[RMDB]
RNA sequence: GGGAACGACUCGAGUAGAGUCGAAAAGGCCAUCCUGGAUUAGGGUGGGCCCUGGACCCGUAACAGGUGAUCGUCUAAGAGAAAGAGGAGGGGGAUCUGAGAUGCACAGAUCGGGAACCAGCCAUGAAGACAGGCCAGAGACUGGAGUGUGUGGCCAGAUAUGGCCCACUUUCGAGUGGGCCAUAUCAAAAGAAACAACAACAACAAC
Reactivity to DMS in 0.01 (KOAc 150mM, MgCl2 10mM, bicine 150mM(pH8.5), 24C), signal-to-noise 1, nucleotides 027 to 156: g020g010c010c000a070u000c010c000u000g030g000a300u000u010a050g020g040g030u000g020g040g040c020c010c000u000g010g020a260c010c020c010g000u010a070a120c100a110g000g010u000g010a020u000c040g000u010c040u010a090a140g000a120g000a050a070a160g010a090g010g040a210g000g010g040g110g020a050u010c020u010g020a070g010a080u020g020c060a140c000a060g000a080u000c000g010g010g010a060a070c020c010a040g010c010c000a090u000g010a070a170g030a140c060a140g000g000c080c020a120g000a140g020a120c040u000g010g010a090g020u020g010u020g040u000g010g000c010c050a100
Reactivity to 2A3 in 0.01 (KOAc 150mM, MgCl2 10mM, bicine 150mM(pH8.5), 24C), signal-to-noise 1, nucleotides 027 to 156: g010g000c010c010a010u030c000c000u090g100g280a300u180u300a050g000g000g020u020g000g000g000c020c000c000u010g010g040a060c000c000c020g050u040a080a100c090a090g000g050u070g020a100u080c100g050u000c010u100a170a030g030a000g060a170a080a000g040a040g000g050a020g000g000g000g000g000a000u000c010u030g010a050g000a110u130g040c060a000c000a050g080a030u040c070g000g000g000a040a060c010c000a010g000c030c000a000u110g000a050a010g030a050c070a020g010g000c050c000a000g060a020g000a090c040u060g010g010a030g030u090g020u000g010u020g020g010c000c000a000
Source: RMDB library OK3TST, as collected in RNAgym. Chemical mapping of a 207-nucleotide RNA with DMS and 2A3. The reactions ran in a buffer of 150 mM KOAc, 10 mM MgCl2 and 150 mM bicine (pH 8.5), at 24 C.